[RMDB]
The record gives the reactivity of an RNA of 207 nucleotides to DMS and 2A3. For DMS the reverse transcriptase was MarathonRT.
RNA sequence: GGGAACGACUCGAGUAGAGUCGAAAAGAAUGAUCAGUAGGCUGAAACAAGAAGCUGGUAAUGUUUUUACUCAAAAGCUCGAAGGAAUGUUUAAUGAUAUGAAUCUUUCACAAGAAUUGUUACAGGAGUACAAACAUAAUUCUGCGUUACAGUCGGAGUGGUGAUUAGUAUUCGUACUAAUCACCACAAAAGAAACAACAACAACAAC
Reactivity to DMS in 0.01 (KOAc 150mM, MgCl2 10mM, bicine 150mM(pH8.5), 24C), signal-to-noise 2, nucleotides 027 to 156: g030a150a150u010g000a160u040c040a090g010u000a080g010g020c010u010g010a150a140a080c060a140a200g010a090a180g000c070u000g050g020u010a100a070u000g010u000u000u030u000u000a030c010u000c000a070a200a110a170g000c070u000c040g000a140a140g010g020a110a150u010g000u000u000u000a120a070u000g010a180u010a040u010g020a110a100u000c070u000u000u000c020a100c070a080a220g000a020a150u000u000g020u010u000a120c110a070g000g010a080g050u010a070c100a050a080a040c080a170u000a020a170u000u000c040u010g020c060g000u000u000a080c060a040g000u000c010g000g010a170
Reactivity to 2A3 in 0.01 (KOAc 150mM, MgCl2 10mM, bicine 150mM(pH8.5), 24C), signal-to-noise 3, nucleotides 027 to 156: g030a010a090u160g030a050u090c030a040g100u150a090g030g000c010u000g030a070a140a000c030a090a150g100a090a000g060c130u130g190g010u140a070a040u020g000u050u010u000u000u010a020c020u020c030a040a070a110a110g020c040u120c210g040a050a030g010g020a060a020u090g000u060u270u140a190a110u200g090a030u090a040u250g100a080a070u060c010u010u080u070c010a010c010a070a040g060a240a130u130u090g060u140u180a090c060a050g000g110a000g050u000a010c040a020a010a000c000a010u070a040a040u170u040c000u040g040c060g030u000u040a070c020a020g070u070c030g030g010a060
For 2A3 the reverse transcriptase was SuperScript II with manganese. Reactivities are given for positions 27 through 156. Source: RMDB library OK3TST, as collected in RNAgym. For DMS, 2,104 sequencing reads were counted.